This 177-nucleotide RNA was probed chemically with DMS. The DMS profile rests on 816 reads. Conditions: 150 mM KOAc, 10 mM MgCl2 and 150 mM bicine (pH 8.5), 24 C.

RNA sequence: GGGAACGACUCGAGUAGAGUCGAAAAGAUAUGGAGUCGCUAGGGAGACGCGUCGGAAACGACCGUCGACGAUCUAGGCGACUCCUAAGUCAAAACGCGUAAUCAAUCUUCGGAUUGAUUACGCGAAUCUGAGAAUCCAGUUCGCUGGAUUCUCAGAAAAAGAAACAACAACAACAAC
Reactivity to DMS in 0.01 (KOAc 150mM, MgCl2 10mM, bicine 150mM(pH8.5), 24C), signal-to-noise 1, nucleotides 027 to 126: g000a030u000a300u000g000g010a010g000u000c000g010c000u000a030g020g000g000a040g010a010c020g000c240g000u000c010g020g020a110a090a160c020g000a000c030c010g000u000c000g010a020c120g010a040u000c000u000a080g020g020c010g010a000c000u010c000c010u000a040a110g030u000c040a050a100a160a180c050g000c000g000u000a010a010u020c000a000a000u000c000u000u030c240g030g000a010u000u000g000a000u010u000a000c000g030c030g000a000a030